[RMDB]
RNA sequence: GGGAACGACUCGAGUAGAGUCGAAAAGCCUUUAGCCUUCGCUCCCCAGCUUCCGCUCGUAAGACGGGGAUAAAGCGGAGUCAAACCAAAACGAGCUCGUGUGGAAGCCACCGUUUGAGGAUCGAAGCAUUAAAUUAAAUCAAACUAGCUUAAUUGUGCUACAUUACAACUUCGGUUGUAAUGUAGCAAAAGAAACAACAACAACAAC
Reactivity to 2A3 in 0.01 (KOAc 150mM, MgCl2 10mM, bicine 150mM(pH8.5), 24C), signal-to-noise 2, nucleotides 027 to 156: g040c010c010u160u130u200a050g030c000c000u000u000c000g000c000u010c000c000c000c010a000g000c000u000u000c020c020g000c000u000c030g000u030a000a000g010a050c000g000g000g000g010a010u200a080a250a000g000c000g000g010a010g010u020c060a030a090a120c120c030a100a080a000a010c000g000a000g000c040u020c080g080u020g000u050g000g110a020a040g000c000c000a010c000c050g010u040u000u090g000a000g000g030a010u100c040g010a010a000g020c000a000u000u070a010a000a120u140u220a060a000a050u030c010a010a000a090c030u040a040g140c060u160u150a100a040u300u190g020u060